[RMDB]
RNA sequence: GGGAACGACUCGAGUAGAGUCGAAAAGAUAUGGACCUCACCGAUGAUCGAUGAAAUCAGUCGGAAACGACUGAUGGAGAUUAAGGUGAGGGUCCUAAGUCAAAACCGGAGACUUCGGUCUCCGGAACUGUAAUCGCUAGUUCGCUAGCGAUUACAGAAAAGAAACAACAACAACAAC
Reactivity to DMS in 0.01 (KOAc 150mM, MgCl2 10mM, bicine 150mM(pH8.5), 24C), signal-to-noise 2, nucleotides 027 to 126: g000a030u000a300u000g030g010a220c010c000u000c010a000c000c000g020a270u010g010a090u000c000g000a140u020g000a150a070a010u010c010a000g010u020c010g020g020a020a120a230c010g000a020c000u010g000a010u000g040g010a060g030a010u000u000a130a300g000g010u010g000a020g010g000g000u000c000c000u000a010a250g000u010c010a070a100a220a220c010c000g020g000a010g000a010c000u000u010c260g020g030u000c010u000c000c000g000g010a010a000
Reactivity to 2A3 in 0.01 (KOAc 150mM, MgCl2 10mM, bicine 150mM(pH8.5), 24C), signal-to-noise 1, nucleotides 027 to 126: g020a020u100a050u100g010g000a000c000c010u020c030a010c020c040g170a290u300g140a010u130c120g270a300u110g000a010a050a000u010c000a000g010u010c000g020g000a110a040a010c010g000a020c060u060g000a010u000g000g030a070g000a010u270u300a000a090g040g000u010g000a050g020g010g010u010c020c000u000a090a000g020u000c000a000a020a220a180c000c000g010g000a030g020a020c030u280u280c300g170g000u000c030u000c000c000g000g020a010a010